An RNA of 177 nucleotides, treated with DMS and read out base by base. The data come from the RNA Mapping Database (RMDB), library TTRINS. For DMS the reverse transcriptase was MarathonRT.

[RMDB]
RNA sequence: GGGAACGACUCGAGUAGAGUCGAAAAGAUAUGGACGCAGUGGUGGAGCUCCUCAUGACAUGACUUAUAUCGGAAACGAUAUAAGUCAUGUCAUGAGUGAGCUAUGAAGCCACAGCGUCCUAAGUCAGAUAUACAAAUUGUUCGCAAUUUGUAUAUCAAAAGAAACAACAACAACAAC
Reactivity to DMS in 0.01 (KOAc 150mM, MgCl2 10mM, bicine 150mM(pH8.5), 24C), signal-to-noise 5, nucleotides 027 to 126: g010a060u000a300u010g000g010a020c010g030c000a080g040u000g000g000u000g000g000a010g020c000u000c000c000u000c000a010u000g000a030c000a010u000g000a020c000u000u000a010u000a000u000c000g000g000a160a110a260c010g010a010u000a000u000a000a000g000u000c000a000u000g000u000c000a000u010g000a010g020u000g020a000g010c000u000a020u010g000a150a300g000c000c000a000c000a020g020c000g000u000c000c000u000a000a050g000u010c070a170